[RMDB]
RNA sequence: GGGAACGACUCGAGUAGAGUCGAAAAAAGUCUUGCGCUCCUAUAGUCGUUCGGACCGCCUUCUAUGCUCGCGUCUUUCGAGGGGUACGUCGCCACUGGCCGCUGAAAAGUGGUGUGGCACUGCUCCGCAAAGAUGGUAUUUCGAUACCAUCUUUGCAAAAGAAACAACAACAACAAC
Reactivity to 2A3 in 0.01 (KOAc 150mM, MgCl2 10mM, bicine 150mM(pH8.5), 24C), signal-to-noise 7, nucleotides 027 to 126: a000a000g080u040c050u040u050g010c050g010c010u030c010c010u060a070u080a100g070u050c020g040u040u050c020g020g020a050c010c010g030c020c010u050u020c030u040a070u120g010c000u010c030g030c000g040u020c000u010u060u040c040g030a080g000g010g000g010u010a040c190g020u020c140g000c010c000a010c010u030g190g000c000c010g000c010u030g030a040a040a020a010g000u010g010g010u090g000u000g020g000c000a000c000u000g010c000u000c000c000
Reactivity to DMS in 0.01 (KOAc 150mM, MgCl2 10mM, bicine 150mM(pH8.5), 24C), signal-to-noise 4, nucleotides 027 to 126: a080a030g010u000c040u010u010g020c050g000c050u000c030c040u000a090u020a060g000u000c020g010u000u000c060g010g000a080c060c030g000c020c030u000u010c050u000a090u020g020c030u000c030g010c070g010u000c030u000u000u010c060g010a200g010g010g000g010u000a010c200g000u000c130g010c000c000a010c000u060g010g020c000c000g010c000u000g010a070a060a110a020g020u000g000g020u000g030u000g000g000c010a010c010u000g000c010u000c000c020